[RMDB]
RNA sequence: GGGAACGACUCGAGUAGAGUCGAAAAGGGUCGUAUGGAAUAUAGGAGGGCGGUGGGUGCGCUUGCGUUCAAUCCGGCUGGGCGGGAUGGCGCACCGGGGCGCUCCAGACGCUCGGCGCGUUGCCAACGUCCUAAUUAGUUUCGACUAAUUAGGACGAAAAGAAACAACAACAACAAC
Reactivity to DMS in 0.01 (KOAc 150mM, MgCl2 10mM, bicine 150mM(pH8.5), 24C), signal-to-noise 3, nucleotides 027 to 126: g010g000g020u010c070g020u010a090u020g000g010a100a110u010a130u010a100g010g000a100g020g000g010c060g000g000u000g000g010g020u000g010c020g010c020u000u000g020c050g020u000u010c090a070a120u010c040c040g020g020c060u000g010g010g020c080g000g000g000a070u000g000g010c000g000c000a030c060c030g000g000g010g000c040g000c030u000c050c060a090g000a100c080g010c010u000c050g000g000c150g010c040g020u010u010g000c050c020a090a180
Reactivity to 2A3 in 0.01 (KOAc 150mM, MgCl2 10mM, bicine 150mM(pH8.5), 24C), signal-to-noise 3, nucleotides 027 to 126: g040g000g000u060c040g020u100a090u130g080g120a180a060u210a040u110a270g090g000a030g010g050g000c080g050g090u100g050g020g000u020g000c010g000c010u010u120g050c030g040u050u060c020a060a070u030c050c030g040g000c040u040g010g020g020c060g010g020g020a070u100g010g000c010g010c000a010c010c010g000g000g020g010c050g020c030u050c020c000a030g020a050c040g000c040u030c000g040g000c040g000c010g040u040u040g050c000c010a050a050

The record gives the reactivity of an RNA of 177 nucleotides to DMS and 2A3. The RNA was probed in 150 mM KOAc, 10 mM MgCl2 and 150 mM bicine (pH 8.5) at 24 C. For DMS the reverse transcriptase was MarathonRT.